Background: Conditions: 150 mM KOAc, 10 mM MgCl2 and 150 mM bicine (pH 8.5), 24 C. Structure probing data (DMS and 2A3) for a 207-nucleotide construct. It was measured as part of the RMDB library OK3TST. The 2A3 profile rests on 1,938 reads. DMS adducts were read by reverse transcription with MarathonRT.
RNA sequence: GGGAACGACUCGAGUAGAGUCGAAAAUGAGGAAGCAUGAUUGCUGUAAAACUUUACUGCAAAGUAGUAUGCGUUGUCAUGGUUACCUUGAACAUGGGCUUUGGAUUUAAGAUUCUCACAGACACUGCUUUGAAUCUCAGUGCUUUGAAGACGCUUAUAAAUUAGCCGAUUUCGAUCGGCUAAUUUAAAAAGAAACAACAACAACAAC
Reactivity to DMS in 0.01 (KOAc 150mM, MgCl2 10mM, bicine 150mM(pH8.5), 24C), signal-to-noise 3, nucleotides 027 to 156: u000g000a070g010g000a110a060g020c020a040u010g010a110u000u010g000c030u010g040u000a060a090a100a120c070u000u000u010a090c080u010g000c080a060a080a060g030u000a070g020u000a080u000g020c070g030u000u010g010u000c020a070u000g010g020u000u010a100c020c020u000u000g010a080a090c090a110u000g010g020g010c050u000u000u000g020g000a130u000u000u000a060a090g000a110u000u010c010u000c040a080c090a110g000a050c030a030c000u000g000c090u010u000u000g010a070a120u010c060u000c030a060g030u000g010c020u000u000u010g010a080a090g000a060c080g020c020u000u000a200
Reactivity to 2A3 in 0.01 (KOAc 150mM, MgCl2 10mM, bicine 150mM(pH8.5), 24C), signal-to-noise 3, nucleotides 027 to 156: u160g000a000g020g010a000a020g070c040a000u040g010a070u050u100g020c030u060g000u020a030a040a030a020c030u120u110u160a050c050u110g070c060a040a040a060g010u020a030g030u020a070u110g030c030g020u030u100g030u060c020a020u010g010g100u010u130a230c000c000u020u040g060a030a020c040a070u050g010g000g040c010u050u060u040g070g020a090u070u110u120a020a050g010a030u070u030c010u000c020a020c020a020g100a060c010a010c020u030g070c000u130u130u160g090a110a150u060c010u000c070a000g010u010g020c050u000u020u070g030a070a020g030a010c060g000c030u050u080a090